[RMDB]
RNA sequence: GGGAACGACUCGAGUAGAGUCGAAAAAGUCUCGUGGGUGAUCACCGGUGCGACGGUUACACUUUCCGCUACAGGACCUGACCGGGAAUGCAAGUGCUCCCAGAGCAUCGGAACCGUACCUGGCCCUACACAGGUGGACAGGCAAGGUACGGAACGCGCUGUUACUGGACUUCGGUCCAGUAACAGCAAAAGAAACAACAACAACAAC
Reactivity to 2A3 in 0.01 (KOAc 150mM, MgCl2 10mM, bicine 150mM(pH8.5), 24C), signal-to-noise 1, nucleotides 027 to 156: a050g010u000c000u000c060g070u110g000g000g020u020g090a140u200c060a020c010c000g050g050u040g040c090g040a000c010g000g060u040u020a060c050a000c010u030u150u200c040c040g130c040u140a060c050a090g010g060a090c000c050u110g020a110c090c020g000g000g080a100a020u300g040c010a010a010g000u060g090c050u090c040c000c000a000g000a000g000c000a030u020c050g020g020a150a140c000c000g000u000a000c000c000u000g010g010c000c030c000u020a000c050a000c140a210g060g070u050g010g110a120c150a040g000g000c040a040a000g000g000u000a000c010g010g010a020a010c030g020c010